[RMDB]
RNA sequence: GGGAACGACUCGAGUAGAGUCGAAAAUUGCAGCUCAUGCACUGAGAGAAACGAACGGAUAAUAAGUAUAGAAUAGAAUAGAUGCGGCCCAUGCCCAUGCCAGUUGGUAACUCAGGUGGAGCAUCCACCAGUACGACGACUUCGGUCGUCGUACUGGAAAAGAAACAACAACAACAAC
Reactivity to 2A3 in 0.01 (KOAc 150mM, MgCl2 10mM, bicine 150mM(pH8.5), 24C), signal-to-noise 3, nucleotides 027 to 126: u170u090g020c000a000g000c000u000c020a100u140g040c050a080c130u000g030a010g000a030g040a090a100a000c080g010a030a000c010g020g030a050u050a150a080u110a210a010g140u150a170u070a060g090a170a060u060a080g090a060a070u060a110g090a070u050g060c040g020g030c040c060c020a140u180g020c000c000c000a000u080g140c040c020a070g010u080u110g030g000u000a060a060c020u010c060a000g000g030u020g070g030a010g040c030a030u030c000c000a020
Reactivity to DMS in 0.01 (KOAc 150mM, MgCl2 10mM, bicine 150mM(pH8.5), 24C), signal-to-noise 2, nucleotides 027 to 126: u000u050g050c060a060g020c080u000c030a140u000g000c030a050c000u000g060a000g040a050g000a080a030a050c170g000a160a100c010g000g010a090u000a040a130u000a020a230g020u010a100u010a060g000a050a130u110a070g000a090a010u040a030g040a030u030g000c040g000g000c000c000c000a010u040g000c010c000c000a070u010g000c070c050a000g000u000u000g000g000u010a040a060c090u000c060a000g020g040u010g030g030a070g020c080a130u030c050c020a060
The data come from the RNA Mapping Database (RMDB), library OK1LIB. This 177-nucleotide RNA was probed chemically with 2A3 and DMS. The DMS profile rests on 2,036 reads. As a SHAPE reagent, 2A3 marks flexible, mostly unpaired nucleotides at the ribose 2'-OH. The RNA was probed in 150 mM KOAc, 10 mM MgCl2 and 150 mM bicine (pH 8.5) at 24 C. 2A3 adducts were read by reverse transcription with SuperScript II with manganese.